Conditions: 150 mM KOAc, 10 mM MgCl2 and 150 mM bicine (pH 8.5), 24 C.
Structure probing data (2A3) for a 207-nucleotide construct.
For 2A3 the reverse transcriptase was SuperScript II with manganese.
[RMDB]
RNA sequence: GGGAACGACUCGAGUAGAGUCGAAAAUCACGACCGCGAGUCGAUGGGUGUGGCCCAUGACGAUCGACUUCUGGAACUUCUUCGCCCCGUUGAGCGCGGUCGACCCCGCGAUCUGCGAGAGGCUGAUCUUCCCCAUGUGUCCGUGGGUCGAGAUCCAGUAUGCAAAACGGUUCGCCGUUUUGCAUACAAAAGAAACAACAACAACAAC
Reactivity to 2A3 in 0.01 (KOAc 150mM, MgCl2 10mM, bicine 150mM(pH8.5), 24C), signal-to-noise 1, nucleotides 027 to 156: u060c040a040c040g020a000c000c000g050c000g020a030g250u040c020g020a020u010g010g000g020u290g000u070g010g010c010c000c030a050u050g030a000c130g080a100u180c080g130a120c080u040u030c010u160g030g010a050a040c070u040u050c020u150u090c140g040c000c000c000c000g000u000u000g000a020g000c020g020c000g000g020u030c030g000a000c000c010c000c020g030c050g050a050u050c040u120g010c010g000a190g040a120g120g130c030u050g000a050u070c100u040u080c000c000c000c000a100u190g050u030g050u060c030c030g010u020g000g000g000u010c050g010a000g000a090u010c000c010a000